[RMDB]
Notes: This 207-nucleotide RNA was probed chemically with 2A3. It was measured as part of the RMDB library RSTRND.
RNA sequence: GGGAACGACUCGAGUAGAGUCGAAAAGGGGAUGAGAAAGCAAGAAUCGCAUGCCGAGGACUCCUGGCUCCUCGUAAAUCAUCCGGGAAACAACACAACUGCCAACAACGAAAUGGCACUUGCUGCCUGAUCUAAAAGUCAGGUGAGCUAGCGUCUAACCAUGGAACGCGUUCGCGCGUUCCAUGGUAAAAGAAACAACAACAACAAC
Reactivity to 2A3 in 0.01 (KOAc 150mM, MgCl2 10mM, bicine 150mM(pH8.5), 24C), signal-to-noise 2, nucleotides 027 to 156: g020g010g020g000a020u080g050a030g050a040a050a000g060c030a020a000g050a170a070u110c110g000c090a030u070g070c070c000g000a000g000g000a000c020u010c010c000u000g020g020c070u060c030c000u020c000g060u120a000a010a010u070c030a010u140c000c000g000g020g020a070a020a010c120a150a020c040a020c030a180a140c120u070g090c060c010a060a050c020a000a020c110g100a130a060a120u090g030g020c020a000c000u000u020g000c000u000g000c000c000u000g000a000u010c000u110a110a000a000a000g010u000c000a000g060g000u030g030a000g000c010u020a000g000c000g050u000c020u040a070